[RMDB]
Source: RMDB library TTRINS, as collected in RNAgym. Chemical mapping of a 177-nucleotide RNA with DMS. For DMS, 2,286 sequencing reads were counted. The reactions ran in a buffer of 150 mM KOAc, 10 mM MgCl2 and 150 mM bicine (pH 8.5), at 24 C. For DMS the reverse transcriptase was MarathonRT.
RNA sequence: GGGAACGACUCGAGUAGAGUCGAAAAGAUAUGGACUGCCUACCCACCGAUACCGCACCGAAGAACUGCGUAGUUUCGGAAACGAAACUACGCAGGGAGGUGAUGGUAUCGAGGGCAGUCCUAAGUCGACUACUAGUUUGUUCGCAAACUAGUAGUCAAAAGAAACAACAACAACAAC
Reactivity to DMS in 0.01 (KOAc 150mM, MgCl2 10mM, bicine 150mM(pH8.5), 24C), signal-to-noise 3, nucleotides 027 to 126: g000a210u010a160u000g020g010a010c000u000g010c020c010u000a190c030c000c010a300c120c000g000a010u000a040c020c020g000c000a010c000c000g000a190a170g010a140a300c020u000g000c000g060u000a000g000u000u000u000c010g010g020a050a080a270c010g010a000a000a010c000u000a010c000g010c000a000g000g000g000a040g000g010u000g000a010u010g030g020u000a000u000c000g030a040g010g000g000c000a000g000u000c000c000u020a010a070g020u030c210